[RMDB]
Description:
An RNA of 177 nucleotides, treated with DMS and 2A3 and read out base by base. For DMS the reverse transcriptase was MarathonRT. 2A3 adducts were read by reverse transcription with SuperScript II with manganese. The 2A3 profile rests on 2,726 reads. For DMS, 1,815 sequencing reads were counted. Conditions: 150 mM KOAc, 10 mM MgCl2 and 150 mM bicine (pH 8.5), 24 C.
RNA sequence: GGGAACGACUCGAGUAGAGUCGAAAACAGUGAUGGAAACAUCACUGAAAAACGUGGGAGCGCAUCACGAAAAAGUCGAUCGAAUACCGAUCGACAAGCGCUAAAGUCAUGCCGAAAGGCAUGACAAACGCUACCCAUAGUUCGCUAUGGGUAGCGUAAAAGAAACAACAACAACAAC
Reactivity to DMS in 0.01 (KOAc 150mM, MgCl2 10mM, bicine 150mM(pH8.5), 24C), signal-to-noise 2, nucleotides 027 to 126: c000a010g080u010g000a000u010g000g000a140a080a280c020a010u000c000a000c010u000g000a090a040a020a000a300c020g020u000g000g040g020a010g000c050g000c000a300u020c010a040c010g020a010a070a020a100a020g000u000c000g000a040u000c000g060a300a300u110a090c220c000g000a020u000c000g010a000c030a000a030g000c000g000c030u060a110a090a110g010u000c000a000u000g040c000c000g000a120a090a120g000g000c000a000u000g000a000c010a000a060
Reactivity to 2A3 in 0.01 (KOAc 150mM, MgCl2 10mM, bicine 150mM(pH8.5), 24C), signal-to-noise 3, nucleotides 027 to 126: c000a000g000u000g000a000u010g020g040a030a010a060c000a000u000c000a000c000u000g010a080a010a000a000a000c010g000u010g000g000g030a040g000c020g010c010a020u000c000a010c120g280a100a000a010a040a000g000u000c000g020a010u010c000g010a050a060u140a300c160c020g000a000u000c010g000a000c010a010a010g010c000g000c000u010a070a000a010g000u000c000a000u000g000c000c000g030a100a040a060g000g000c000a000u000g000a000c000a020a030